RNA sequence: GGGAACGACUCGAGUAGAGUCGAAAAUCUAUUACAUGUAUGGUUUCUGUCCCUAUUUUGACUGACUUUAGGGCUCCCUCAAUGGGAAAGUUUACAGAGACCCUGGACUGGAACCUAGAGAUUAGUCGUUAGAUAACGGGUUCGCCCGUUAUCUAACAAAAGAAACAACAACAACAAC
Reactivity to DMS in 0.01 (KOAc 150mM, MgCl2 10mM, bicine 150mM(pH8.5), 24C), signal-to-noise 1, nucleotides 027 to 126: u010c030u010a100u010u010a140c200a070u000g020u000a060u010g040g000u000u010u010c110u030g000u020c010c000c010u010a100u020u000u010u000g000a040c040u000g000a040c020u010u000u000a020g000g000g000c110u010c040c010c160u000c120a050a090u000g000g030g010a060a100a050g010u000u000u040a110c150a070g000a130g000a200c110c000c040u010g000g000a060c100u000g050g010a100a090c010c000u010a030g000a020g010a130u010u000a030g010u010c050
Reactivity to 2A3 in 0.01 (KOAc 150mM, MgCl2 10mM, bicine 150mM(pH8.5), 24C), signal-to-noise 1, nucleotides 027 to 126: u000c000u010a040u090u260a110c070a100u290g060u240a080u150g030g000u040u050u000c040u070g040u000c000c020c000u060a240u050u130u060u130g030a040c000u000g000a000c010u090u000u000a010g000g000g000c040u000c020c020c000u030c010a110a150u190g020g000g040a050a050a050g000u020u090u060a040c040a010g130a110g000a230c020c020c000u050g050g050a070c050u040g080g060a050a040c000c000u000a030g000a000g000a050u000u000a010g000u010c060